[RMDB]
RNA sequence: GGGAACGACUCGAGUAGAGUCGAAAAUCAGGCAACUUCGGUUGCCUGAAAAUAAACUCGCCUAUAGCCAGGCGAGUACGAAAGCGGCUAAAGCAAUGGAAAAAACUGCCUCGUUCGCGAGGCAGAACAAUCUGGUAUUCUUCGGAAUACCAGAUUGAAAAGAAACAACAACAACAAC
Reactivity to DMS in 0.01 (KOAc 150mM, MgCl2 10mM, bicine 150mM(pH8.5), 24C), signal-to-noise 3, nucleotides 027 to 126: u000c000a010g040g000c000a010a000c000u000u010c180g030g000u000u000g000c000c000u010g000a000a040a070a100u010a070a110a170c000u000c000g020c000c000u010a100u000a110g010c100c100a110g010g000c000g000a020g000u000a020c170g030a070a070a070g010c100g000g000c010u000a040a120a120g010c110a070a140u000g000g010a000a070a060a040a060a110c000u000g000c000c000u010c010g020u000u010c200g030c010g000a000g000g000c000a010g000a030a120
Reactivity to 2A3 in 0.01 (KOAc 150mM, MgCl2 10mM, bicine 150mM(pH8.5), 24C), signal-to-noise 3, nucleotides 027 to 126: u020c000a000g020g000c000a000a000c020u060u080c220g140g010u000u000g000c000c000u000g000a000a000a000a010u080a000a060a000c000u010c000g000c000c000u110a110u090a100g080c040c020a000g000g000c000g000a000g020u000a020c020g070a030a030a020g080c060g060g020c060u100a060a040a050g030c040a050a140u160g060g080a100a070a040a020a020a040c010u000g000c010c010u000c000g030u040u040c120g000c010g080a000g000g000c000a000g000a000a010